Source information: Chemical mapping of a 177-nucleotide RNA with 2A3 and DMS. The data come from the RNA Mapping Database (RMDB), library M2PK50. The reactions ran in a buffer of 150 mM KOAc, 10 mM MgCl2 and 150 mM bicine (pH 8.5), at 24 C. For DMS, 1,124 sequencing reads were counted.
[RMDB]
RNA sequence: GGGAACGACUCGAGUAGAGUCGAAAACGUCAAGGAUUCGUCCUUGACGAAAGUCGCGGCUUGAGGGCGUAUACGGCUGCGCACACACACGAGCCUCAAGCCAAACAGGUGGAUUCGUCCACCUGAAACCUCGUAGGGGUUUCGACCCCUACGAGGUAAAAGAAACAACAACAACAAC
Reactivity to 2A3 in 0.01 (KOAc 150mM, MgCl2 10mM, bicine 150mM(pH8.5), 24C), signal-to-noise 2, nucleotides 027 to 126: c000g020u010c000a000a010g000g020a010u030u130c160g070u010c040c000u000u010g010a000c000g010a000a000a000g000u010c000g030c140g190g000c010u000u000g000a000g000g100g030c010g000u010a040u010a060c010g010g000c010u030g010c020g000c000a030c000a000c000a010c010a010c140g050a020g120c010c000u010c010a000a000g000c010c030a000a010a010c000a000g010g000u000g010g010a020u010u070c160g040u010c050c000a000c000c000u010g010a020a000
Reactivity to DMS in 0.01 (KOAc 150mM, MgCl2 10mM, bicine 150mM(pH8.5), 24C), signal-to-noise 1, nucleotides 027 to 126: c000g030u000c010a020a000g020g010a010u000u000c270g010u000c000c000u000u000g000a020c000g000a010a050a030g030u000c010g010c170g030g020c000u000u000g000a020g000g010g010c010g040u000a050u000a130c020g020g000c020u000g020c020g010c010a240c200a130c060a030c160a040c020g000a060g000c000c000u000c010a000a020g000c000c010a050a070a190c030a010g000g040u000g000g000a030u010u000c210g000u000c010c000a000c010c000u000g000a020a150